[RMDB]
RNA sequence: GGGAACGACUCGAGUAGAGUCGAAAAAUAUGCUUCAAGUCCCGUAGCUCGUAAGAUUUGGGACAGUGCCGACAAGCACUUCUUAACGAACUAUGGAUUCUCCAUUAUUGACAUUGUCAAACAUAAUCCCCAUAGCAUCACCAUUCACUUUGGUGGACCACUGACUGGAGUUCGCUCCAGUCAGUGGAAAAGAAACAACAACAACAAC
Reactivity to 2A3 in 0.01 (KOAc 150mM, MgCl2 10mM, bicine 150mM(pH8.5), 24C), signal-to-noise 2, nucleotides 027 to 156: a010u100a010u040g050c000u090u130c050a070a110g020u030c000c060c030g020u010a010g000c000u000c070g020u060a000a070g000a250u060u180u230g050g000g000a090c060a030g000u000g020c000c020g230a140c040a040a030g000c010a000c010u030u000c010u040u040a070a050c000g000a000a000c020u020a020u000g010g010a040u190u010c050u060c040c050a070u130u110a070u060u130g000a010c110a100u060u180g000u010c020a030a050a050c010a040u100a090a100u100c000c000c000c000a070u110a060g040c020a060u080c000a030c020c010a010u130u130c090a040c200u110u070u050g020g000u000g010g010a010